Notes:
Source: RMDB library M2RFPK, as collected in RNAgym. Structure probing data (DMS and 2A3) for a 207-nucleotide construct. The 2A3 profile rests on 7,486 reads. Reactivities are given for positions 27 through 156. For DMS the reverse transcriptase was MarathonRT. Conditions: 150 mM KOAc, 10 mM MgCl2 and 150 mM bicine (pH 8.5), 24 C.
[RMDB]
RNA sequence: GGGAACGACUCGAGUAGAGUCGAAAAAGCCAUACCAUUACCAUGGUAUGGCAAGUCCGUGACGGCGAUGGAUCCCGCCUGGCCGAUGCCGAACUGCCGAUCUGGCUGAUGGUUCCUGCCCCGUCAAAAAACGUAAAGCACUUCGGUGCUUUACGAACACUGAAAUAAUCUUCGGAUUAUUUCAGUGAAAAGAAACAACAACAACAAC
Reactivity to DMS in 0.01 (KOAc 150mM, MgCl2 10mM, bicine 150mM(pH8.5), 24C), signal-to-noise 2, nucleotides 027 to 156: a150g000c010c000a010u000a000c000c000a100u000u000a170c230c160a290u020g020g010u000a010u010g040g000c000a010a020g010u000c030c010g010u000g020a060c000g000g020c020g000a180u000g010g000a060u000c030c000c040g020c030c020u000g000g000c000c060g000a100u010g020c040c040g020a130a110c100u010g010c050c030g000a090u010c020u010g020g020c010u030g000a130u020g050g020u010u000c010c040u000g010c060c030c020c010g010u000c020a010a020a070a070a080a060c000g000u000a000a010a000g020c000a010c000u000u010c200g050g010u000g030c010u000u000u000a000c010g000a070a090
Reactivity to 2A3 in 0.01 (KOAc 150mM, MgCl2 10mM, bicine 150mM(pH8.5), 24C), signal-to-noise 5, nucleotides 027 to 156: a000g000c000c000a000u000a000c000c000a020u100u190a150c100c090a040u020g000g010u000a000u010g000g000c000a000a010g030u010c010c020g030u050g010a010c010g000g030c110g040a020u050g010g010a020u040c010c020c000g020c020c030u030g010g000c020c020g060a060u130g090c050c040g150a240a140c110u130g020c020c020g050a080u060c060u100g020g000c020u040g040a140u120g040g000u010u020c010c000u040g030c010c020c000c010g000u000c000a030a030a010a020a040a070c000g000u000a000a000a000g000c000a000c010u030u110c190g080g000u010g000c000u000u000u000a000c000g000a010a000
Background: DMS (dimethyl sulfate) methylates the pairing face of unpaired adenines and cytosines.